[RMDB]
RNA sequence: GGGAACGACUCGAGUAGAGUCGAAAAGAUAUGGAGAGCAAUGACGUAUGAGCACGAAGAACGGUAUCAAGCCUCGGAAACGAGGCUUGAUACCGGGAGUGUCCAUAUAAGACAGCUCUCCUAAGUCGAAUGUAAGUUACUUCGGUAACUUACAUUCAAAAGAAACAACAACAACAAC
Reactivity to DMS in 0.01 (KOAc 150mM, MgCl2 10mM, bicine 150mM(pH8.5), 24C), signal-to-noise 3, nucleotides 027 to 126: g010a110u010a300u030g000g010a030g020a020g020c020a090a180u010g010a260c300g010u010a000u000g000a110g030c010a030c000g000a090a210g010a110a200c000g000g000u000a030u000c000a000a010g000c030c010u000c010g000g000a130a070a290c010g010a000g000g000c000u000u000g000a010u000a000c000c000g000g000g010a060g010u000g000u000c020c000a010u000a030u010a140a200g010a190c300a160g000c010u000c010u000c010c000u030a020a100g020u010c160